[RMDB]
RNA sequence: GGGAACGACUCGAGUAGAGUCGAAAAUCGGAGGAUCCCGCCUGCACCAGGAUGGGCUUUCCCUGUGGGCUGGUCGGCACCUGCAAGGGACCGCGGACUUUGAAGUGUUUUCCGACAUGGUUGAGAUGCGUAAAUCGCAUUUCGAUGCGAUUUACGCAAAAGAAACAACAACAACAAC
Reactivity to 2A3 in 0.01 (KOAc 150mM, MgCl2 10mM, bicine 150mM(pH8.5), 24C), signal-to-noise 1, nucleotides 027 to 126: u050c030g000g090a050g040g070a090u020c000c000c000g020c010c010u090g000c030a110c190c020a030g140g040a120u090g070g000g000c000u000u070u040c000c000c030u000g050u110g000g070g000c000u010g000g000u070c080g060g000c010a030c020c000u070g010c030a040a050g140g000g000a050c010c070g010c020g010g050a160c000u190u010u210g050a040a040g060u070g020u000u040u130u030c000c000g030a040c070a020u090g010g050u010u010g000a090g050a050u010
The record gives the reactivity of an RNA of 177 nucleotides to 2A3. The RNA was probed in 150 mM KOAc, 10 mM MgCl2 and 150 mM bicine (pH 8.5) at 24 C. 2A3 adducts were read by reverse transcription with SuperScript II with manganese.